This 207-nucleotide RNA was probed chemically with DMS and 2A3. Conditions: 150 mM KOAc, 10 mM MgCl2 and 150 mM bicine (pH 8.5), 24 C. The data come from the RNA Mapping Database (RMDB), library OK3TST.
RNA sequence: GGGAACGACUCGAGUAGAGUCGAAAACGGGAUAGGACAGCUGAAGGUAGUUACCGUGAUUGCGCGUGACAUAACGCGACACGGCCUCAGGGCCAGACUUCCAAGCAUUCCUGAUACGCCUAAAAGAGCGCUUGAGGGCGGAUGAGCGUAUGUGGCGAUAAUGCACGUGAUUCGUCACGUGCAUUAUAAAAGAAACAACAACAACAAC
Reactivity to DMS in 0.01 (KOAc 150mM, MgCl2 10mM, bicine 150mM(pH8.5), 24C), signal-to-noise 4, nucleotides 027 to 156: c070g010g010g030a100u000a160g020g020a040c070a070g010c040u020g010a080a110g020g000u000a060g020u010u000a030c020c000g030u000g010a140u010u000g010c000g020c020g010u000g020a170c240a120u010a080a020c020g020c010g000a070c020a030c020g010g010c020c050u000c040a090g020g020g000c020c020a160g000a050c020u010u000c020c020a080a120g010c040a110u000u000c020c010u020g020a140u000a040c020g010c000c030u000a050a080a100a120g000a140g000c080g000c020u000u030g010a200g000g000g030c050g000g020a080u000g000a090g010c030g000u000a070u000g020u010g010g000c040g010
Reactivity to 2A3 in 0.01 (KOAc 150mM, MgCl2 10mM, bicine 150mM(pH8.5), 24C), signal-to-noise 6, nucleotides 027 to 156: c040g020g010g020a070u070a100g040g020a050c050a040g040c050u050g050a180a040g060g010u090a040g060u110u120a050c000c010g010u020g030a160u070u230g060c020g010c010g000u030g050a050c090a230u240a140a000c030g000c000g000a000c000a000c000g000g000c000c000u020c040a030g050g010g000c020c010a010g000a040c040u050u010c020c010a010a030g040c010a090u030u050c000c000u020g020a030u050a150c020g000c000c000u070a080a070a030a030g100a050g020c060g010c040u050u060g020a140g020g070g000c030g030g010a050u110g040a020g010c020g010u060a060u120g060u060g040g010c010g000